[RMDB]
RNA sequence: GGGAACGACUCGAGUAGAGUCGAAAAGGGGUCUCUCUUUGUCAGUAGGCUACUCUUCUUGGAUUUAUAGGCUGAAGCCUCCACGGCCUAUUGUCAGAAGAGGGCCUACUUGGAUUUAAGAGAGACGGAGGCACCCAAACCAGAGUUCGCUCUGGAAGAUACUGUAGCACUUCGGUGCUACAGUAUCAAAAGAAACAACAACAACAAC
Reactivity to 2A3 in 0.01 (KOAc 150mM, MgCl2 10mM, bicine 150mM(pH8.5), 24C), signal-to-noise 1, nucleotides 027 to 156: g110g000g040g000u010c000u000c000u040c030u000u010u010g030u020c010a030g000u000a000g000g010c000u190a300c000u300c000u010u030c010u110u190g120g030a120u300u300u040a040u100a010g000g000c000u020g090a120a080g030c040c030u080c030c050a070c020g010g000c000c000u000a000u000u030g040u030c050a020g000a000a000g000a000g000g000g000c020c000u000a000c000u000u020g000g000a000u000u280u210a030a000g000a010g000a000g000a010c010g000g000a000g000g060c020a090c000c000c000a000a050a000c000c010a010g010a000g010u040u200c170g000c040u030c000u010g000g000a000a030
About this RNA: This 207-nucleotide RNA was probed chemically with 2A3. The data come from the RNA Mapping Database (RMDB), library RNAMAK.